[RMDB]
RNA sequence: GGGAACGACUCGAGUAGAGUCGAAAAGCCUUUUAGCAUUCAUAUCAAGUUUAUCCGUCUUCUCCAAGGCAACUUGAUUACGGGUAGCCUCCUCAAUGACAGGUUUGGCAAGCUUUCUUAACCAUUUCAUACUCCCGGAUUUCGAUCCGGGAGUAUGAAAAGAAACAACAACAACAAC
Reactivity to 2A3 in 0.01 (KOAc 150mM, MgCl2 10mM, bicine 150mM(pH8.5), 24C), signal-to-noise 3, nucleotides 027 to 126: g080c000c000u050u090u060u110a060g040c050a040u080u120c060a030u050a060u120c020a020a020g030u010u130u120a120u160c090c000g000u020c050u070u050c050u020c130c080a030a000g010g010c010a030a010c000u020u030g010a020u060u050a080c000g020g030g010u060a010g000c020c020u010c000c000u040c080a100a230u090g030a160c040a030g040g070u060u060u020g050g010c010a010a040g000c020u050u090u060c020u050u070a120a100c080c010a100u010u010u000